[RMDB]
RNA sequence: GGGAACGACUCGAGUAGAGUCGAAAAAACUCUUUAAGGCAAUAACGAACUAAUUCUAAGCAAGUAAUGGAGAUAUGCCAGGGUCACUAUCUAGCCAUAAUAGUGCUUGACAGUAUGAUACUAACUGAAUAUGGUAAACCGUUCGCGGUUUACCAAAACUAUUACGAUGAUUCGUCAUCGUAAUAGUAAAAGAAACAACAACAACAAC
Reactivity to DMS in 0.01 (KOAc 150mM, MgCl2 10mM, bicine 150mM(pH8.5), 24C), signal-to-noise 4, nucleotides 027 to 156: a060a020c030u010c020u000u000u000a080a080g020g010c040a080a090u000a060a120c050g010a090a110c060u000a080a130u010u000c050u000a080a120g020c060a080a090g010u000a080a080u010g010g010a100g000a090u000a060u000g020c010c040a060g000g020g010u000c030a040c020u000a020u020c020u000a100g010c080c050a070u010a060a080u010a070g040u010g010c010u000u010g000a050c020a050g010u000a050u010g030a110u000a050c080u010a050a140c050u000g010a080a110u000a130u000g000g010u000a000a000a010c010c000g050u000u010c280g040c030g030g000u000u000u000a010c000c000a010a020a030
Reactivity to 2A3 in 0.01 (KOAc 150mM, MgCl2 10mM, bicine 150mM(pH8.5), 24C), signal-to-noise 6, nucleotides 027 to 156: a000a000c120u130c030u100u110u080a120a030g030g010c040a050a070u130a140a040c060g050a020a020c060u070a070a080u140u050c040u130a050a050g030c070a060a030g030u120a080a090u070g030g020a040g000a050u060a030u100g020c030c020a030g020g030g000u040c010a000c010u000a010u050c020u030a030g040c010c000a030u030a160a050u070a140g050u050g030c020u020u040g040a010c020a010g060u070a060u080g060a040u050a130c050u100a190a030c010u050g070a080a030u140a100u130g000g000u000a000a000a000c000c000g010u010u050c210g010c010g090g010u000u010u010a000c000c000a010a000a000

The record gives the reactivity of an RNA of 207 nucleotides to DMS and 2A3. 2A3 is a SHAPE reagent: it acylates the 2'-hydroxyl of flexible nucleotides of all four kinds. The data come from the RNA Mapping Database (RMDB), library M2RFPK. For 2A3, 4,112 sequencing reads were counted.